[RMDB]
RNA sequence: GGGAACGACUCGAGUAGAGUCGAAAAAGGCCAUUCUGUCUUCUACUGGGGUGUUUAGUGCCUCUCGCAUGGUGACACUUCCUGGUACAAAUGAACAAAUGAAAGGAAGACCUCCAUCCUUUAUGCCGCUAUGUAGAGCUUUCGAGCUCUACAUAGCAAAAGAAACAACAACAACAAC
Reactivity to DMS in 0.01 (KOAc 150mM, MgCl2 10mM, bicine 150mM(pH8.5), 24C), signal-to-noise 2, nucleotides 027 to 126: a070g010g010c050c010a010u000u000c110u000g020u010c020u020u000c160u000a030c020u000g000g010g000g020u000g000u000u020u000a220g010u000g000c010c100u010c170u000c120g000c020a060u010g010g010u000g000a030c070a040c020u000u000c000c010u020g000g020u000a030c150a080a080a080u020g010a100a040c110a050a050a060u000g000a050a050a030g000g010a050a040g010a200c050c020u000c020c040a230u000c000c000u010u010u020a080u030g020c160c070

About this RNA
The record gives the reactivity of an RNA of 177 nucleotides to DMS. The reactions ran in a buffer of 150 mM KOAc, 10 mM MgCl2 and 150 mM bicine (pH 8.5), at 24 C. The data come from the RNA Mapping Database (RMDB), library OK2TRN.